[RMDB]
RNA sequence: GGGAACGACUCGAGUAGAGUCGAAAACGUGCCAUCAUGCUAAGGGUUUGAUAUCUGCUAAAACCCGGUGCAUUCAUCAAUGCAGGUUAAGCCAAAGGGAUGUCCCGACCGGAGGCCGACAAUCCAGAUAGCUCAAGAAUGUUCGCAUUCUUGAGAAGGUUUCAUUGGUAUUCGUACCAAUGAAACCAAAAGAAACAACAACAACAAC
Reactivity to DMS in 0.01 (KOAc 150mM, MgCl2 10mM, bicine 150mM(pH8.5), 24C), signal-to-noise 3, nucleotides 027 to 156: c050g020u010g010c010c040a110u030c120a030u000g040c020u000a290a150g000g010g040u000u000u010g010a220u010a060u030c070u020g000c070u010a110a040a030a060c000c010c020g000g070u010g020c010a040u000u020c040a020u000c070a100a190u010g010c010a010g000g020u000u000a100a090g030c020c010a020a300a280g000g010g010a060u010g000u000c010c000c020g000a250c000c020g000g000a300g000g020c020c010g010a090c090a040a150u020c040c030a170g010a160u000a100g010c010u000c000a030a040g020a020a020u010g000u000u020c300g000c030a060u000u000c000u000u010g010a020g010a020a060
Reactivity to 2A3 in 0.01 (KOAc 150mM, MgCl2 10mM, bicine 150mM(pH8.5), 24C), signal-to-noise 4, nucleotides 027 to 156: c060g050u120g070c030c010a100u150c060a050u160g010c020u040a030a050g010g000g010u000u000u010g020a020u030a030u060c020u030g010c010u030a030a020a020a010c010c010c010g000g010u020g020c010a060u040u190c040a050u060c040a110a170u130g000c000a010g080g000u030u060a030a000g010c000c000a010a020a030g020g000g010a050u060g040u050c020c010c020g000a010c000c000g020g000a020g000g000c000c000g010a010c010a070a050u020c090c020a040g050a180u130a080g040c000u000c000a000a020g000a000a000u000g040u070u050c140g010c150a000u000u000c000u000u010g000a000g000a000a020

Chemical mapping of a 207-nucleotide RNA with DMS and 2A3. 2A3 is a SHAPE reagent: it acylates the 2'-hydroxyl of flexible nucleotides of all four kinds. Conditions: 150 mM KOAc, 10 mM MgCl2 and 150 mM bicine (pH 8.5), 24 C. For 2A3 the reverse transcriptase was SuperScript II with manganese.